[RMDB]
Structure probing data (2A3) for a 177-nucleotide construct. Values cover nucleotides 27 to 126. The 2A3 profile rests on 286 reads.
RNA sequence: GGGAACGACUCGAGUAGAGUCGAAAAAGCGUACCUUCUCUCCUGAGUUUAAUCUGGAAUGCGCCCAACUUAUCGUUGAUAAAGGUUACUCAUACCGGGAAGCUACUGAAGCUAUGAAUGUUGGUUUGAUGUAACGACAGUUCGCUGUCGUUACAUCAAAAGAAACAACAACAACAAC
Reactivity to 2A3 in 0.01 (KOAc 150mM, MgCl2 10mM, bicine 150mM(pH8.5), 24C), signal-to-noise 1, nucleotides 027 to 126: a000g080c030g000u080a150c000c000u000u000c000u000c000u010c000c030u010g000a040g080u070u100u170a050a000u070c080u050g050g040a190a200u070g010c000g000c000c080c080a030a000c000u130u300a000u270c160g010u010u010g000a160u160a020a020a020g000g010u000u000a000c000u070c110a070u090a240c080c040g000g000g000a000a000g000c000u000a000c010u120g110a230a000g050c000u070a090u090g150a120a000u000g030u000u010g000g040u000u000u040